[RMDB]
RNA sequence: GGGAACGACUCGAGUAGAGUCGAAAAGGGGUCGUGACGUGCGACCGAUGAAAUGUAGUGGAGGCUAUCUGAAGCCUCCACGGAUAGCCGAUGAAACUACAUGGAGGUCGCAUACGUCACGACGGAGGCACCCAAAACUCGAACUUCGGUUCGAGAACGAAUAACGUGCGUUCGCGCACGUUAUUCGAAAAGAAACAACAACAACAAC
Reactivity to 2A3 in 0.01 (KOAc 150mM, MgCl2 10mM, bicine 150mM(pH8.5), 24C), signal-to-noise 1, nucleotides 027 to 156: g040g000g020g000u000c000g010u000g000a000c000g000u000g000c000g010a000c000c000g010a030u000g000a000a000a000u010g000u000a010g020u010g010g050a050g000g030c000u000a020u000c010u010g000a120a030g010c010c010u000c000c000a000c000g000g000a000u000a000g000c000c060g190a240u200g110a070a020a000c000u000a000c000a000u000g010g000a040g000g000u010c000g000c070a010u030a000c010g000u000c000a000c010g000a010c060g010g000a000g000g060c010a040c000c020c000a020a190a130a220c000u010c000g000a000a000c000u040u090c270g080g000u040u010c010g000a000g030a000a040

Notes
This 207-nucleotide RNA was probed chemically with 2A3. Source: RMDB library RNAMAK, as collected in RNAgym. Reactivities are given for positions 27 through 156. The reactions ran in a buffer of 150 mM KOAc, 10 mM MgCl2 and 150 mM bicine (pH 8.5), at 24 C.